[RMDB]
RNA sequence: GGGAACGACUCGAGUAGAGUCGAAAACUCCUGCGAGUGUCAAGCUCGGUCCUAAUCGGUGGUGCUCCCCAAGAAAUCCCAUCACACAACUACGGCUUCGCAGGGGGAGGCGUCCAGCGCUACGGAGGAGCAGCGUCAUCUUCGGAUGACGCUGCUCAAAAGAAACAACAACAACAAC
Reactivity to 2A3 in 0.01 (KOAc 150mM, MgCl2 10mM, bicine 150mM(pH8.5), 24C), signal-to-noise 2, nucleotides 027 to 126: c000u010c010c010u010g000c020g010a000g030u160g170u300c100a200a010g070c090u050c050g000g060u080c000c000u030a110a130u080c150g040g030u060g000g000u020g010c000u000c000c020c000c010a000a020g060a050a080a010u000c000c040c000a070u120c050a000c000a030c020a030a120c030u120a040c080g070g000c000u080u010c040g000c000a010g010g010g010g020g000a000g000g040c020g030u000c000c110a020g030c000g020c050u160a030c010g130g050a080g020